Structure probing data (DMS) for a 177-nucleotide construct. The data come from the RNA Mapping Database (RMDB), library OK2TRN. For DMS the reverse transcriptase was MarathonRT.
RNA sequence: GGGAACGACUCGAGUAGAGUCGAAAACCCACACCUCCUGAGGAUUGUUGGGUUUUCCCAUGGACUAGGGUUAGACAGCCAGCGAGUCUGAACGGAAGGCGCCAGGUGUGGCAGUGGGGAAGUGAGGCCCCAGGAUGCAAUUCGUUGCAUCCUGGGGAAAAGAAACAACAACAACAAC
Reactivity to DMS in 0.01 (KOAc 150mM, MgCl2 10mM, bicine 150mM(pH8.5), 24C), signal-to-noise 1, nucleotides 027 to 126: c030c000c000a040c030a030c020c000u010c070c200u010g000a040g000g000a060u010u000g020u010u010g000g000g040u000u000u000u000c020c000c010a140u010g010g000a100c040u000a100g000g010g010u010u000a070g020a080c090a090g000c050c030a050g010c110g010a100g000u000c040u010g000a070a180c120g020g000a020a090g010g010c070g030c070c060a070g010g030u000g020u010g010g020c050a080g000u000g020g010g010g000a080a060g000u000g010a060g010g010